[RMDB]
RNA sequence: GGGAACGACUCGAGUAGAGUCGAAAAACGCUACCUUUCGAGGUAGCGUCACCUACUUCGCGCAACCGUCGAGUCGUUCCCAUGGUUGCGUGAAGUAGUUUGAGUGGCAGACGUUCGCGUCUGCCAAUCAUGUUUACGGAUUCGUCCGUAAACAUGAAAAAGAAACAACAACAACAAC
Reactivity to DMS in 0.01 (KOAc 150mM, MgCl2 10mM, bicine 150mM(pH8.5), 24C), signal-to-noise 4, nucleotides 027 to 126: a020c000g010c000u010a000c000c000u000u000u010c150g010a030g010g020u000a000g010c010g010u000c040a070c230c000u000a010c010u000u000c010g010c000g010c010a010a010c000c010g020u010c180g000a040g000u000c000g010u000u000c000c000c000a010u000g010g010u000u000g010c010g020u000g010a010a010g000u000a010g000u000u010u000g000a130g020u010g000g000c010a010g010a010c000g020u000u010c210g030c010g010u000c000u000g000c000c000a000a020
Reactivity to 2A3 in 0.01 (KOAc 150mM, MgCl2 10mM, bicine 150mM(pH8.5), 24C), signal-to-noise 2, nucleotides 027 to 126: a000c000g010c000u000a000c000c000u030u040u150c240g140a010g000g020u000a010g000c000g010u000c010a020c000c000u000a010c000u000u000c010g000c000g010c000a010a000c000c010g190u210c180g060a030g000u010c000g000u010u020c000c000c010a010u020g000g010u000u000g000c010g000u010g010a000a000g000u010a010g000u020u140u170g120a070g030u080g010g000c000a000g010a000c000g030u070u090c270g040c000g110u010c000u000g000c000c000a000a010

An RNA of 177 nucleotides, treated with DMS and 2A3 and read out base by base. For DMS the reverse transcriptase was MarathonRT. The RNA was probed in 150 mM KOAc, 10 mM MgCl2 and 150 mM bicine (pH 8.5) at 24 C.